The record gives the reactivity of an RNA of 177 nucleotides to DMS and 2A3. 2A3 adducts were read by reverse transcription with SuperScript II with manganese. DMS adducts were read by reverse transcription with MarathonRT. Conditions: 150 mM KOAc, 10 mM MgCl2 and 150 mM bicine (pH 8.5), 24 C. For 2A3, 5,962 sequencing reads were counted. Source: RMDB library M2PK90, as collected in RNAgym. For DMS, 5,126 sequencing reads were counted.

RNA sequence: GGGAACGACUCGAGUAGAGUCGAAAAUUAAAGUACGUAGAAGCGGCGUGAAGCAUGUAGAAAGCUUUGCGAGCAUAACGAGCUACAUGUGAGCGAAAGCGGUUACGUACAACGAUAUGCAAAAAAACAGGAUAUCAAGAUUCGUCUUGAUAUCCUGAAAAGAAACAACAACAACAAC
Reactivity to DMS in 0.01 (KOAc 150mM, MgCl2 10mM, bicine 150mM(pH8.5), 24C), signal-to-noise 5, nucleotides 027 to 126: u020u000a080a150a180g020u000a000c000g010u000a010g010a090a120g020c010g000g020c040g010u000g010a100a230g000c000a010u000g000u000a010g000a090a090a090g010c020u000u000u010g010c160g020a100g020c040a050u020a050a060c150g010a100g010c000u000a020c000a020u010g010u000g000a300g000c010g000a020a070a140g010c000g020g010u000u000a010c000g010u000a010c000a090a080c140g000a040u000a050u020g000c110a020a000a060a050a030a080a150
Reactivity to 2A3 in 0.01 (KOAc 150mM, MgCl2 10mM, bicine 150mM(pH8.5), 24C), signal-to-noise 4, nucleotides 027 to 126: u060u040a090a020a010g010u000a000c010g020u010a000g020a110a000g020c020g120g000c030g030u030g050a060a010g000c000a000u010g000u000a020g020a110a110a010g010c020u070u100u160g130c170g030a020g000c010a010u080a140a060c120g020a050g070c000u010a010c000a010u040g110u150g030a030g010c020g010a130a070a020g000c000g020g000u040u000a000c000g000u000a000c000a010a000c010g010a030u080a070u300g140c110a050a070a020a030a020a020a060